[RMDB]
Annotation:
Source: RMDB library RFMREP, as collected in RNAgym. Structure probing data (DMS) for a 177-nucleotide construct.
RNA sequence: GGGAACGACUCGAGUAGAGUCGAAAAGUUGGAUCAGCUUCACAAGGAGUGUAUUCUGAUGAUAAGCAAGUCAACAUCAAUCUAUGAGUGUCGGAGAAGGGUUUUGAGAAUGUAGCAAUUUUUAUUACGACACGUCAAUGUUCGCAUUGACGUGUCGAAAAGAAACAACAACAACAAC
Reactivity to DMS in 0.01 (KOAc 150mM, MgCl2 10mM, bicine 150mM(pH8.5), 24C), signal-to-noise 1, nucleotides 027 to 126: g020u000u000g000g000a090u030c150a110g010c040u000u000c130a040c080a230a300g000g010a010g030u000g040u010a040u000u000c010u000g000a030u000g000a040u000a010a100g030c060a030a030g000u090c070a050a020c030a080u000c090a170a140u000c040u030a050u020g010a110g040u010g010u000c050g020g000a080g010a040a130g010g000g000u000u000u010u010g020a000g000a010a100u020g060u000a110g040c100a080a020u040u000u010u010u000a080u020u010a130

The RNA was probed in 150 mM KOAc, 10 mM MgCl2 and 150 mM bicine (pH 8.5) at 24 C.
DMS adducts were read by reverse transcription with MarathonRT.